[RMDB]
RNA sequence: GGGAACGACUCGAGUAGAGUCGAAAAGCAGAGGUUCGCCUCUGCCACACGGGGUCUAUCGUUGAUCGAUAGAAGCAUCGAUCCUGAAGCCUCCACGGGGGAGCUUACUAUCGGGAGAUAGACGGAGGCACCCAGACGAGAGUCCUUCGGGACUCAACCCAAACACGUAAUUCGUUACGUGUUUGGGAAAAGAAACAACAACAACAAC
Reactivity to DMS in 0.01 (KOAc 150mM, MgCl2 10mM, bicine 150mM(pH8.5), 24C), signal-to-noise 1, nucleotides 027 to 156: g000c040a020g000a040g020g000u000u000c270g010c010c000u000c000u000g000c000c020a040c060a100c120g020g010g030g000u000c000u000a030u000c010g020u000u020g000a110u000c010g020a030u010a000g000a120a040g020c000a220u000c130g000a050u010c010c010u010g030a100a080g020c000c010u000c000c050a290c120g000g000g000g000g000a090g000c000u000u000a070c040u000a040u010c000g040g000g030a100g040a070u010a040g000a100c000g010g020a120g040g000c040a180c010c010c020a300g000a120c080g000a200g040a060g000u000c000c000u000u000c260g040g000g020a010c000u010c010a040a160
Reactivity to 2A3 in 0.01 (KOAc 150mM, MgCl2 10mM, bicine 150mM(pH8.5), 24C), signal-to-noise 4, nucleotides 027 to 156: g000c020a000g000a010g030g000u090u170c160g150c020c000u000c000u000g020c000c000a060c010a010c000g050g010g000g030u000c010u000a010u010c000g170u230u040g020a030u030c000g000a000u000a000g010a000a010g010c010a080u300c030g070a080u050c000c000u060g070a130a070g030c000c020u000c040c000a050c050g000g020g000g020g000a010g000c010u010u080a250c000u040a000u000c010g000g010g000a060g010a010u010a000g000a010c000g000g010a010g000g000c020a070c000c010c000a020g060a110c080g110a090g000a010g140u020c000c000u050u120c240g070g010g000a000c000u000c020a010a070
An RNA of 207 nucleotides, treated with DMS and 2A3 and read out base by base. The reactions ran in a buffer of 150 mM KOAc, 10 mM MgCl2 and 150 mM bicine (pH 8.5), at 24 C. The 2A3 profile rests on 4,106 reads.